Structure probing data (2A3 and DMS) for a 177-nucleotide construct. For DMS, 1,189 sequencing reads were counted. For 2A3 the reverse transcriptase was SuperScript II with manganese. The reactions ran in a buffer of 150 mM KOAc, 10 mM MgCl2 and 150 mM bicine (pH 8.5), at 24 C.
RNA sequence: GGGAACGACUCGAGUAGAGUCGAAAAGGGAUGUGCGGCGUCGCCAGGCUGAGAGAGGACGUCAUGGACAAAGAGCUUGAUAGAGAUUACAUCGCUCCGUCGAUUCCUCAGUCGCUUCACUCUAACACCGUUACUACCACUUCGGUGGUAGUAACGGAAAAGAAACAACAACAACAAC
Reactivity to 2A3 in 0.01 (KOAc 150mM, MgCl2 10mM, bicine 150mM(pH8.5), 24C), signal-to-noise 2, nucleotides 027 to 126: g050g010g010a020u090g000u060g080c100g040g040c060g070u080c050g040c080c020a030g110g000c060u060g020a020g000a000g000a010g070g000a000c030g000u090c030a080u080g070g020a050c030a050a170a030g070a010g020c010u060u100g030a040u140a030g100a000g030a070u080u160a040c010a050u090c080g030c100u010c000c010g020u010c020g030a100u020u010c000c000u030c010a010g010u000c020g020c050u040u030c020a090c040u070c050u080a080a020c070a000
Reactivity to DMS in 0.01 (KOAc 150mM, MgCl2 10mM, bicine 150mM(pH8.5), 24C), signal-to-noise 2, nucleotides 027 to 126: g010g000g030a070u000g050u020g000c070g020g020c070g000u000c050g020c020c030a060g000g030c050u070g000a120g000a120g000a080g010g000a080c040g000u030c060a090u000g000g000a080c100a050a160a060g000a080g010c050u000u000g010a130u020a080g010a150g010a210u020u000a080c060a090u000c080g000c010u000c090c090g000u000c020g020a090u010u000c030c000u000c010a040g010u000c000g000c020u000u000c010a110c120u000c090u000a060a150c240a160